Chemical mapping of a 177-nucleotide RNA with 2A3 and DMS. Values cover nucleotides 27 to 126. For DMS, 3,507 sequencing reads were counted. Values are in units of 0.01, from 0 to 300, in steps of 10.
RNA sequence: GGGAACGACUCGAGUAGAGUCGAAAAAGCGAACUGCGCACGGAGAAGCCUUGAGGGAAUGCCGUAGGACCCGGGUUCGAUUCCCGGCAGCUCCACCGAAGGGCCAGGUCAGUGGCAAAAAUAAAAAGUCGUCAGACUCGUUCGCGAGUCUGACGGCAAAAGAAACAACAACAACAAC
Reactivity to 2A3 in 0.01 (KOAc 150mM, MgCl2 10mM, bicine 150mM(pH8.5), 24C), signal-to-noise 5, nucleotides 027 to 126: a010g070c030g020a060a030c040u060g000c110g050c050a020c020g090g080a060g020a100a020g030c010c010u050u050g040a070g030g040g040a100a100u150g060c030c040g060u080a090g030g050a090c020c000c010g030g010g000u070u120c050g010a040u040u090c000c000c000g000g000c000a030g000c010u030c030c020a050c000c000g010a010a020g030g000g000c000c010a030g000g070u070c010a010g010u020g020g000c030a020a020a050a010a000u280a020a050a020a010a010
Reactivity to DMS in 0.01 (KOAc 150mM, MgCl2 10mM, bicine 150mM(pH8.5), 24C), signal-to-noise 2, nucleotides 027 to 126: a070g020c040g020a070a060c010u000g000c070g010c060a040c040g010g040a070g010a260a240g000c010c010u020u010g020a280g000g020g000a180a080u000g020c000c030g000u010a130g000g010a060c200c000c000g000g000g030u000u000c200g000a200u050u000c000c000c000g030g020c110a100g000c090u010c040c050a180c000c010g010a270a050g030g000g000c020c030a100g000g020u010c020a030g050u000g030g040c030a010a030a070a040a050u030a110a080a030a130a090